[RMDB]
RNA sequence: GGGAACGACUCGAGUAGAGUCGAAAAGAAAGAAACUGGUUGCGAUGAUUAUGACAAAUUCCUCGUUCUGAAUGCUAUAGCCAUGGCAUGACAGACUCCUAUUACACCCAUAGAAUAUGAGCACCAAAGAACAGAGCUAGUUCGCUAGCUCUGUUCUAAAAGAAACAACAACAACAAC
Reactivity to DMS in 0.01 (KOAc 150mM, MgCl2 10mM, bicine 150mM(pH8.5), 24C), signal-to-noise 2, nucleotides 027 to 126: g000a110a090a050g010a130a090a040c030u000g020g010u000u010g010c000g020a060u000g000a030u020u000a060u060g000a050c140a090a050a110u000u020c010c030u000c070g040u030u000c000u050g000a290a060u040g000c020u010a070u000a060g080c080c190a060u000g000g000c020a000u010g020a100c100a050g010a040c070u030c000c010u000a020u010u000a020c190a020c040c030c030a090u020a060g000a060a030u000a030u010g000a030g000c080a020c000c010a060a060
Reactivity to 2A3 in 0.01 (KOAc 150mM, MgCl2 10mM, bicine 150mM(pH8.5), 24C), signal-to-noise 4, nucleotides 027 to 126: g070a000a060a000g120a020a070a020c040u030g060g000u090u020g010c020g040a070u040g030a030u030u150a060u170g110a050c070a030a120a070u060u010c010c000u020c000g010u040u010c030u070g070a110a090u030g000c010u030a010u030a140g070c070c050a030u050g020g000c000a010u020g020a040c000a010g010a010c010u000c000c000u050a050u050u090a080c060a110c050c000c010a000u060a060g150a060a050u120a080u140g020a020g010c030a010c020c000a090a130
About this RNA:
Structure probing data (DMS and 2A3) for a 177-nucleotide construct. For 2A3 the reverse transcriptase was SuperScript II with manganese. The DMS profile rests on 2,258 reads. Source: RMDB libraries RFM100 and RFMREP, as collected in RNAgym. The reactions ran in a buffer of 150 mM KOAc, 10 mM MgCl2 and 150 mM bicine (pH 8.5), at 24 C.